[RMDB]
The record gives the reactivity of an RNA of 207 nucleotides to DMS and 2A3. It was measured as part of the RMDB library M2RFPK.
RNA sequence: GGGAACGACUCGAGUAGAGUCGAAAAGAAAGAAAGAAAGAAACCGUCUCUGCUAGUCUCACGGUAACCACGUUGAAAUCGCAACGAAUGAAGCUCGCACUCAACUUCAACGGCUUAACGAGUGCAAAAAACUUACUGAUCUUCGGAUCAGUAAGAACAAGAUUUGUAUCUUCGGAUACAAAUCUUGAAAAGAAACAACAACAACAAC
Reactivity to DMS in 0.01 (KOAc 150mM, MgCl2 10mM, bicine 150mM(pH8.5), 24C), signal-to-noise 2, nucleotides 027 to 156: g000a110a050a110g020a100a090a110g000a140a130a190g000a130a130a080c030c010g010u010c030u000c020u010g030c030u000a060g010u000c000u020c020a120c050g000g000u000a060a110c000c070a070c210g040u010u010g010a040a110a140u000c110g020c010a030a050c040g030a120a110u030g010a100a120g000c090u000c070g030c010a040c040u000c040a040a060c040u000u000c010a030a120c040g000g000c100u000u000a060a130c120g000a100g010u000g010c030a040a000a050a030a070a080c010u010u000a020c010u000g000a010u010c010u000u010c300g040g000a020u000c000a000g000u000a010a010g000a040a100
Reactivity to 2A3 in 0.01 (KOAc 150mM, MgCl2 10mM, bicine 150mM(pH8.5), 24C), signal-to-noise 3, nucleotides 027 to 156: g050a040a060a000g080a070a120a010g020a060a100a010g020a090a050a010c030c000g020u000c060u000c000u040g020c030u030a030g020u080c040u030c050a040c030g000g010u020a050a040c050c020a050c060g000u010u020g040a090a110a080u130c080g010c110a000a060c040g060a050a050u090g020a020a010g030c020u080c130g000c060a000c000u010c010a060a050c000u080u020c030a070a070c050g090g000c040u050u020a050a000c050g000a010g000u030g030c020a010a020a000a090a000a000c000u000u000a000c000u000g000a000u010c010u030u040c130g080g000a000u000c000a000g000u000a000a000g000a010a010
For DMS the reverse transcriptase was MarathonRT. 2A3 adducts were read by reverse transcription with SuperScript II with manganese.